[RMDB]
RNA sequence: GGGAACGACUCGAGUAGAGUCGAAAAGUGGUGUUCGCCUUCGUCUUCGGGUUCCUGGUGGCGGCGGCCUGUGGCUACAUGGCGGGGCUGAUCGGCUCGUCGACCAGCCCGAUUUCCGGCGUCGGCACGUGCUAAUUAGCUUCGGCUAAUUAGCACGAAAAGAAACAACAACAACAAC
Reactivity to 2A3 in 0.01 (KOAc 150mM, MgCl2 10mM, bicine 150mM(pH8.5), 24C), signal-to-noise 1, nucleotides 027 to 126: g090u080g060g130u000g000u050u090c030g000c000c000u030u060c060g010u030c020u010u030c020g020g000g000u060u180c050c000u040g040g000u010g100g200c040g000g000c000g000g020c000c010u300g040u130g180g000c010u080a090c080a160u170g120g080c120g000g020g030g000c010u040g070a160u090c030g010g030c020u010c180g020u020c010g030a060c000c000a020g020c000c020c020g020a030u010u030u050c050c060g000g000c040g000u030c000g000g030c000a000
Reactivity to DMS in 0.01 (KOAc 150mM, MgCl2 10mM, bicine 150mM(pH8.5), 24C), signal-to-noise 2, nucleotides 027 to 126: g010u010g010g010u000g020u000u000c040g020c020c010u000u000c190g040u000c020u010u010c040g010g010g000u020u000c200c060u020g000g040u010g010g020c030g000g030c030g010g000c030c020u000g020u010g000g020c050u000a080c160a110u020g000g010c100g010g020g000g020c010u000g000a060u000c220g000g010c080u010c080g030u000c010g010a070c030c010a050g000c010c010c020g010a040u000u000u010c140c130g010g000c040g010u000c050g000g010c030a120